This 177-nucleotide RNA was probed chemically with DMS and 2A3. For DMS the reverse transcriptase was MarathonRT. For 2A3, 2,414 sequencing reads were counted.

[RMDB]
RNA sequence: GGGAACGACUCGAGUAGAGUCGAAAAGGCGCACGUUACGAGGCCUGGCUCCCGGUCCGGCCCUACCUUGCGUGCGCAUAUCUCCGGGAUCUGCGCCGCGUCUGCUCGCGGCGAUUUCGGUUAUGCCGUAUACAGCUGAGUUCGCUCAGCUGUAUACAAAAGAAACAACAACAACAAC
Reactivity to DMS in 0.01 (KOAc 150mM, MgCl2 10mM, bicine 150mM(pH8.5), 24C), signal-to-noise 1, nucleotides 027 to 126: g000g000c000g020c010a020c030g000u000u000a040c130g000a120g000g000c000c010u010g030g000c010u000c120c140c130g000g000u010c020c020g000g000c000c000c030u010a020c080c080u010u010g030c010g020u000g000c010g030c010a010u000a030u010c030u000c010c010g000g000g000a010u000c080u030g010c120g030c020c010g000c000g010u010c160u020g020c150u000c000g010c020g020g000c010g000a010u000u000u000c010g010g000u010u010a030u000g030c150c070
Reactivity to 2A3 in 0.01 (KOAc 150mM, MgCl2 10mM, bicine 150mM(pH8.5), 24C), signal-to-noise 2, nucleotides 027 to 126: g090g000c010g020c000a010c000g000u070u160a050c100g080a080g010g010c020c010u010g030g040c020u120c060c100c050g030g000u010c010c020g000g000c000c000c020u080a130c000c060u020u060g020c000g000u000g000c000g000c010a000u060a020u010c050u000c020c020g000g020g000a010u010c030u220g140c060g020c020c000g020c010g040u080c170u300g140c100u030c020g000c000g010g030c000g000a000u000u000u000c000g020g010u080u070a100u160g060c050c010